The record gives the reactivity of an RNA of 207 nucleotides to DMS and 2A3.
[RMDB]
RNA sequence: GGGAACGACUCGAGUAGAGUCGAAAAUCGCGCAACCGGGCAAGCGGAAUCAUCGGAACUUUUAACAGUAUGUUGAUGAUGCAGCGCCUAAAAGAUGCUAAAGUAUCGCAUUACUUUUGGUUCGGGAUGAUGGACGACCGCGAGCGCGAGAGCCAUAGCCAUCGUAAUAAUUCGUUAUUACGAUGGCAAAAGAAACAACAACAACAAC
Reactivity to DMS in 0.01 (KOAc 150mM, MgCl2 10mM, bicine 150mM(pH8.5), 24C), signal-to-noise 1, nucleotides 027 to 156: u000c000g000c010g070c010a030a300c210c000g060g000g000c060a150a220g030c020g010g000a260a050u000c040a020u000c020g000g000a020a060c000u010u020u000u000a070a160c090a070g010u000a030u020g000u030u000g020a030u020g040a220u000g000c090a090g060c000g000c030c000u010a090a080a090a160g020a100u010g000c000u000a030a060a070g000u000a040u000c060g030c030a060u010u000a060c090u000u010u000u000g040g010u000u010c010g020g030g000a080u000g020a060u010g000g020a300c010g000a010c000c010g000c060g030a300g020c040g000c010g040a020g000a100g010c000c020a010u020a300
Reactivity to 2A3 in 0.01 (KOAc 150mM, MgCl2 10mM, bicine 150mM(pH8.5), 24C), signal-to-noise 5, nucleotides 027 to 156: u010c000g000c000g000c000a010a050c050c000g010g060g020c160a140a040g120c010g050g060a070a010u010c000a000u010c010g020g010a000a000c020u070u170u110u200a110a060c050a030g010u020a010u050g070u250u300g030a050u030g010a020u050g000c020a000g010c000g060c010c000u090a100a080a010a010g020a020u130g010c010u040a090a050a040g060u030a070u010c010g000c030a010u080u180a080c000u050u050u040u070g030g010u000u010c030g190g080g010a020u020g000a010u010g020g130a040c030g010a010c000c000g000c010g010a000g000c000g000c010g000a010g000a000g010c000c020a090u110a030
DMS adducts were read by reverse transcription with MarathonRT.